[RMDB]
RNA sequence: GGGAACGACUCGAGUAGAGUCGAAAAGGAUCCUCUCACAGGAUUGUCUCUGUGUUCCGAAACUCCAACAGUAUUGCUUCGGGACACCUACAGCAAUACUGUAGGUAUAGAGAGUAGGAGAGGAUCGCGCUAUAGCUCACUUCGGUGAGCUAUAGCGAAAAGAAACAACAACAACAAC
Reactivity to DMS in 0.01 (KOAc 150mM, MgCl2 10mM, bicine 150mM(pH8.5), 24C), signal-to-noise 2, nucleotides 027 to 126: g010g010a010u000c000c010u010c000u000c000a100c110a130g010g000a110u000u000g000u000c020u020c000u010g020u000g030u000u000c010c010g000a060a040a140c060u020c160c080a080a110c200a130g010u020a100u000u000g010c050u000u000c130g010g000g000a030c200a060c010c000u000a020c090a000g010c050a110a050u010a300c000u010g000u020a000g000g020u000a030u010a040g010a030g010a050g010u000a100g000g010a020g000a010g010g000a000u000c010g010
Reactivity to 2A3 in 0.01 (KOAc 150mM, MgCl2 10mM, bicine 150mM(pH8.5), 24C), signal-to-noise 1, nucleotides 027 to 126: g040g010a000u000c020c000u020c010u040c010a220c030a130g190g080a260u180u260g120u050c020u000c020u040g030u000g010u040u000c020c000g000a040a000a000c050u080c090c050a050a000c030a170g130u160a140u130u170g020c020u010u020c010g010g000g030a030c020a010c000c010u020a010c010a000g050c040a040a080u080a210c000u020g000u000a010g000g040u020a050u190a020g040a030g030a000g060u110a090g070g000a000g000a000g010g000a000u000c010g000
The record gives the reactivity of an RNA of 177 nucleotides to DMS and 2A3.
The RNA was probed in 150 mM KOAc, 10 mM MgCl2 and 150 mM bicine (pH 8.5) at 24 C.
For DMS, 1,506 sequencing reads were counted.
DMS adducts were read by reverse transcription with MarathonRT.